[RMDB]
RNA sequence: GGGAACGACUCGAGUAGAGUCGAAAAUGUAUGAAGAUGAGGCAGAUAAUCUAUACGUACAUAAUGAUAUUAUGUUACCUGCAAUUCCCAUUUGUUUAGAGUGGUUAGAAUUUCCCGUUGGGAAGACGGAUGAUGACUAUUUCGAUAGUCAUCAUCCAAAAGAAACAACAACAACAAC
Reactivity to DMS in 0.01 (KOAc 150mM, MgCl2 10mM, bicine 150mM(pH8.5), 24C), signal-to-noise 4, nucleotides 027 to 126: u000g010u000a030u010g010a130a080g010a080u010g010a090g020g010c040a010g010a090u000a120a060u010c060u000a060u000a080c070g010u000a030c030a030u000a050a040u020g010a130u010a300u000u000a000u000g000u000u000a050c030c040u010g010c060a060a210u000u000c010c000c010a130u010u000u000g010u000u000u010a080g000a090g020u000g010g010u030u000a100g020a110a100u000u010u000c000c010c000g020u010u000g030g020g000a040a060g000a110c240
Reactivity to 2A3 in 0.01 (KOAc 150mM, MgCl2 10mM, bicine 150mM(pH8.5), 24C), signal-to-noise 1, nucleotides 027 to 126: u110g030u030a020u170g090a080a040g100a110u040g050a070g030g000c010a010g010a110u050a110a020u060c040u000a060u010a080c010g020u010a000c010a040u100a070a030u190g190a080u080a090u300u020a040u050g010u030u040a010c000c000u000g020c010a010a040u020u030c000c000c000a010u020u030u130g060u020u160u060a120g000a010g060u080g060g110u050u080a030g010a140a170u010u070u040c000c050c010g110u090u140g010g010g000a030a060g030a020c090